[RMDB]
RNA sequence: GGGAACGACUCGAGUAGAGUCGAAAAGGGAGAUUGGCGGUGGACGAGCCACUCGCCAACCGGGUCAGGUCCGGAAGGAAGCAGCCCUAACGAGGUCCGGAUCGGGUCGCUCGUCAGUCUCCUACCUGUUUUAAACGUCUCAAGUUCGCUUGAGACGCUCAACUAGAGAGUUCGCUCUCUAGUUGAGAAAAGAAACAACAACAACAAC
Reactivity to 2A3 in 0.01 (KOAc 150mM, MgCl2 10mM, bicine 150mM(pH8.5), 24C), signal-to-noise 2, nucleotides 027 to 156: g020g000g000a010g000a010u010u030g010g010c000g000g050u030g030g000a050c020g010a000g000c010c030a040c000u030c010g030c010c040a020a030c050c040g020g000g010u130c010a010g010g030u020c020c000g050g140a060a050g020g000a000a010g020c000a010g000c000c000c020u040a040a010c010g020a010g050g070u170c220c140g020g010a010u030c010g000g010g150u020c010g000c040u150c150g020u000c000a000g000u020c000u020c000c000u000a010c000c000u010g020u010u080u000u030a100a090a010c020g000u010c000u000c000a030a000g010u070u070c160g050c140u020u010g000a010g010a000c000g000